[RMDB]
RNA sequence: GGGAACGACUCGAGUAGAGUCGAAAAGCAAACUGUGGGAGAUUAUGGGGGGACUCGGUCUAAUGAGGAACCGGAAUCUCCAGGGAGUUUCUCUCCAUUUGGCUGAUGGGCAAGGGGGAUUCACCACUAUUGCUGCAUAAUUCGUUAUGCAGCAAUAAAAAGAAACAACAACAACAAC
Reactivity to DMS in 0.01 (KOAc 150mM, MgCl2 10mM, bicine 150mM(pH8.5), 24C), signal-to-noise 4, nucleotides 027 to 126: g000c070a080a050a100c130u000g010u010g010g000g010a050g000a030u000u010a070u010g010g020g020g000g000g000a300c040u010c020g000g000u000c120u020a080a090u010g000a070g000g010a240a170c020c020g010g010a030a130u000c010u000c000c030a070g000g000g020a100g010u000u000u000c060u000c020u000c010c020a080u010u000u000g010g010c050u010g000a080u000g000g000g000c070a080a070g000g000g000g010g000a120u000u010c080a080c050c070a090c250
Reactivity to 2A3 in 0.01 (KOAc 150mM, MgCl2 10mM, bicine 150mM(pH8.5), 24C), signal-to-noise 2, nucleotides 027 to 126: g060c050a080a010a100c060u020g030u190g220g060g000a040g010a040u060u150a150u300g180g030g010g030g060g010a000c000u000c070g010g020u000c040u050a100a100u160g040a050g070g000a020a000c050c000g010g030a000a040u000c010u010c000c000a000g010g050g020a020g010u000u110u030c000u000c000u020c010c000a050u080u030u100g050g000c040u050g030a040u070g000g000g000c050a070a040g050g010g000g040g000a000u050u040c020a080c070c000a030c030
The record gives the reactivity of an RNA of 177 nucleotides to DMS and 2A3. The DMS profile rests on 4,158 reads. Conditions: 150 mM KOAc, 10 mM MgCl2 and 150 mM bicine (pH 8.5), 24 C. For 2A3 the reverse transcriptase was SuperScript II with manganese. DMS (dimethyl sulfate) methylates the pairing face of unpaired adenines and cytosines. DMS adducts were read by reverse transcription with MarathonRT.